Description:
An RNA of 207 nucleotides, treated with 2A3 and read out base by base. Conditions: 150 mM KOAc, 10 mM MgCl2 and 150 mM bicine (pH 8.5), 24 C. For 2A3, 1,111 sequencing reads were counted. Values cover nucleotides 27 to 156.
RNA sequence: GGGAACGACUCGAGUAGAGUCGAAAACGAUCUGUUCGCAGAUCGAGCUACGGAGACGUAGCAAAGCGAGCGAGGGCACGGGCGCUCGCACUACCGGAACUAGAACCAUAUCCACGUGUGCUAGGAUAUGGCCGUGCCCAAAGAAACAGCACACGAAAUAUGCGCUGAUAUUCGUAUCAGCGCAUAUAAAAGAAACAACAACAACAAC
Reactivity to 2A3 in 0.01 (KOAc 150mM, MgCl2 10mM, bicine 150mM(pH8.5), 24C), signal-to-noise 1, nucleotides 027 to 156: c010g000a010u010c010u010g020u000u120c180g060c040a010g000a000u000c000g020a050g000c000u000a000c010g010g020a060g040a070c000g000u000a000g010c040a000a100a030g000c010g010a000g000c000g000a010g000g000g000c000a000c030g020g030g000c060g000c000u000c010g030c010a000c000u070a060c000c030g140g020a130a050c000u060a160g100a130a100c010c000a010u000a000u020c010c020a030c130g000u020g000u000g010c000u020a020g000g000a020u020a000u000g030g000c000c000g000u000g000c000c000c000a070a080a010g050a020a040a050c080a040g010c000a010c020a000c010g020a000a170